[RMDB]
The record gives the reactivity of an RNA of 177 nucleotides to DMS. For DMS, 930 sequencing reads were counted. DMS (dimethyl sulfate) methylates the pairing face of unpaired adenines and cytosines. Reactivities are given for positions 27 through 126. Conditions: 150 mM KOAc, 10 mM MgCl2 and 150 mM bicine (pH 8.5), 24 C.
RNA sequence: GGGAACGACUCGAGUAGAGUCGAAAAAAGAUAUGGAGGUAAGGGAGCGAUCCGAGGACGUUGAUCAUUCGUCGGAAACGACGAAUGGGAGUCCGAGGAUCGCGAAGAACUUACCUCCUAAGUCAAACACGGUACUAAACUUCGGUUUAGUACCGUGAAAAGAAACAACAACAACAAC
Reactivity to DMS in 0.01 (KOAc 150mM, MgCl2 10mM, bicine 150mM(pH8.5), 24C), signal-to-noise 1, nucleotides 027 to 126: a150a090g010a030u000a300u000g040g030a040g000g000u000a010a000g000g000g040a030g000c000g000a010u000c020c020g000a300g000g030a010c000g000u010u000g000a040u000c010a030u000u000c020g050u000c020g010g000a060a040a150c010g000a000c010g010a030a010u000g010g010g000a020g030u010c000c030g000a300g000g000a000u000c000g010c020g000a040a090g020a120a270c000u000u000a000c000c000u000c000c000u010a040a050g000u000c020a060a150a300